Chemical mapping of a 177-nucleotide RNA with 2A3. 2A3 adducts were read by reverse transcription with SuperScript II with manganese.
RNA sequence: GGGAACGACUCGAGUAGAGUCGAAAAGGACUACCCGUCAGGGUUCCGGCCAUACGGACAGCCGGGUCCACUGCCAUAAAGAAAACAAAACAAAACAAAAACAAAACAAAACAAAAACAAAAGAAAAACUCAUAUAGGCUUUCGAGCCUAUAUGAGUAAAAGAAACAACAACAACAAC
Reactivity to 2A3 in 0.01 (KOAc 150mM, MgCl2 10mM, bicine 150mM(pH8.5), 24C), signal-to-noise 2, nucleotides 027 to 126: g070g010a020c090u050a100c020c000c010g000u020c030a050g000g000g040u000u100c000c000g000g000c020c000a190u260a120c050g140g140a020c010a050g020c000c000g000g000g000u000c000c000a160c010u020g000c000c000a130u210a110a120a050g230a060a120a010a000c050a070a110a060a050c020a060a120a000a000c000a010a140a060a000a000c010a030a100a010a010c070a040a090a080a030c140a030a150a010a020a030c020a000a080a140a010g130a020a030a000a020